[RMDB]
RNA sequence: GGGAACGACUCGAGUAGAGUCGAAAAAGCAGGACCGCGUUACGACGCGGUCCUUCAGCAAUGAGUAGAAGCGGUCAAAUUUGGUGUCGAGUUCCAACAAACCAAAUUCGGGCAUUGCUCACUGCAAAAAACUCUCUUUAGUUCGCUAAAGAGAGAACCUUUACAUCCUCUUCGGAGGAUGUAAAGGAAAAGAAACAACAACAACAAC
Reactivity to 2A3 in 0.01 (KOAc 150mM, MgCl2 10mM, bicine 150mM(pH8.5), 24C), signal-to-noise 2, nucleotides 027 to 156: a000g110c030a000g020g000a000c000c010g010c020g010u050u060a110c300g030a010c010g060c000g010g000u000c000c000u000u000c000a000g000c000a000a060u030g000a000g000u030a010g010a160a020g010c080g000g030u070c010a000a010a000u030u000u010g020g010u010g100u130c060g070a130g130u090u150c070c010a030a040c010a140a060a000c010c000a000a000a000u030u050c030g030g000g040c000a010u050u040g000c000u000c010a030c010u000g000c030a000a030a040a110a140a130c000u000c000u000c000u000u020u010a040g000u030u050c230g000c150u010a000a000a000g000a000g010a000g000a000a000